[RMDB]
This 177-nucleotide RNA was probed chemically with 2A3 and DMS. The RNA was probed in 150 mM KOAc, 10 mM MgCl2 and 150 mM bicine (pH 8.5) at 24 C. The 2A3 profile rests on 2,206 reads. DMS adducts were read by reverse transcription with MarathonRT.
RNA sequence: GGGAACGACUCGAGUAGAGUCGAAAACGUCUACAGUUCGCUGUAGACGAAAGGCGCGGCACCGACCGCGGAACAAACGGGCCCAUACAAAAAUUAAAAUAAAAAGAUGAUGGUUCGCCAUCAUCAACUAGGGAAUGUAGUUCGCUACAUUCCCUAGAAAAGAAACAACAACAACAAC
Reactivity to 2A3 in 0.01 (KOAc 150mM, MgCl2 10mM, bicine 150mM(pH8.5), 24C), signal-to-noise 3, nucleotides 027 to 126: c010g010u000c000u000a000c000a020g000u010u100c140g060c120u010g000u010a000g000a000c000g000a000a000a000g100g000c010g000c010g010g000c030a020c040c030g160a100c020c000g000c000g050g180a010a000c010a000a020a000c010g000g050g030c020c030c000a090u150a090c080a080a190a120a050a070u280u300a140a080a070a130u300a060a080a010a040a000g000a010u000g000a000u000g000g090u030u060c210g060c080c000a000u000c000a000u020c000a000a000
Reactivity to DMS in 0.01 (KOAc 150mM, MgCl2 10mM, bicine 150mM(pH8.5), 24C), signal-to-noise 1, nucleotides 027 to 126: c010g010u000c000u000a030c000a000g000u010u040c300g000c000u000g050u000a000g000a000c000g010a000a070a100g010g000c050g000c000g000g000c000a200c000c000g000a060c000c010g030c000g040g010a020a140c160a010a020a060c010g000g030g000c030c000c000a080u040a160c090a040a090a150a050a030u000u000a050a050a070a100u020a080a060a120a090a130g000a000u000g000a000u000g010g020u000u000c210g060c030c020a010u000c000a020u000c000a010a110